[RMDB]
RNA sequence: GGGAACGACUCGAGUAGAGUCGAAAAACGCGAAAACGUGAAAGCAAACGCCAUCAAUAAUAGAAAGGGAAGAUCAGAUUCAGAUUUCGUUUGCAUUCCCGCGCGAUGGCUGGAAAGAAGAGUCGAACACCUCGGGGUGAUUCGUCACCCCGAGGUGAAAAGAAACAACAACAACAAC
Reactivity to 2A3 in 0.01 (KOAc 150mM, MgCl2 10mM, bicine 150mM(pH8.5), 24C), signal-to-noise 1, nucleotides 027 to 126: a000c060g000c060g110a110a040a130a060c080g000u060g200a090a000a000g000c000a000a000a000c000g000c040c000a000u000c000a000a170u180a270a090u150a100g000a000a200a020g160g030g000a090a010g070a170u090c200a000g060a140u100u100c130a040g000a000u010u010u000c000g000u000u000u120g000c000a000u000u000c000c000c000g000c040g100c000g100a140u000g070g000c000u010g020g110a120a000a000g090a110a000g000a080g030u110c060g000a000a010
Reactivity to DMS in 0.01 (KOAc 150mM, MgCl2 10mM, bicine 150mM(pH8.5), 24C), signal-to-noise 2, nucleotides 027 to 126: a010c050g020c000g050a030a020a110a300c060g000u010g000a070a240a080g000c020a000a000a060c040g040c050c070a000u010c000a160a040u040a090a110u010a040g010a160a060a170g000g010g030a100a040g030a030u060c080a000g000a010u000u000c110a030g030a130u000u020u000c000g040u000u000u000g000c080a130u000u030c030c050c000g040c300g070c110g000a010u000g000g000c000u010g000g030a060a090a060g030a130a090g040a040g000u000c000g000a140a280